[RMDB]
RNA sequence: GGGAACGACUCGAGUAGAGUCGAAAAGCAUCUUGCUUCGGCAAGAUGCAAAUAACGGUCAGUGCUUGCAGCUUGUCGUAAAUGCUAACUGGCCUUACGCUAAAACGAAUGCGUUCGCGCAUUCGAACUAGCGAUACAAGUUCGCUUGUAUCGCUAGAAAAGAAACAACAACAACAAC
Reactivity to DMS in 0.01 (KOAc 150mM, MgCl2 10mM, bicine 150mM(pH8.5), 24C), signal-to-noise 4, nucleotides 027 to 126: g000c010a000u000c010u010u000g000c020u000u010c220g020g040c000a000a000g010a020u010g000c000a020a040a050u000a060a080c220g000g020u000c000a010g020u000g010c130u000u010g000c040a060g030c140u000u010g020u020c190g020u010a060a040a090u010g010c020u000a070a020c030u000g000g010c000c010u000u000a020c150g000c130u000a020a050a150a180c010g000a000a000u010g000c000g010u000u000c200g000c020g000c000a010u000u000c000g000a020a110
Reactivity to 2A3 in 0.01 (KOAc 150mM, MgCl2 10mM, bicine 150mM(pH8.5), 24C), signal-to-noise 5, nucleotides 027 to 126: g000c000a000u000c000u000u010g000c010u060u050c140g100g000c000a000a000g010a000u000g000c010a000a000a000u030a030a010c060g020g000u000c010a010g000u030g070c070u130u110g030c010a040g030c040u110u170g150u230c050g050u060a070a100a070u100g000c020u040a080a040c010u010g010g000c000c000u000u050a060c070g000c040u130a050a050a040a040c020g000a010a000u000g020c010g000u030u030c270g000c000g000c060a010u000u000c000g000a020a010
Chemical mapping of a 177-nucleotide RNA with DMS and 2A3. For DMS, 3,570 sequencing reads were counted. Reactivities are given for positions 27 through 126. The reactions ran in a buffer of 150 mM KOAc, 10 mM MgCl2 and 150 mM bicine (pH 8.5), at 24 C.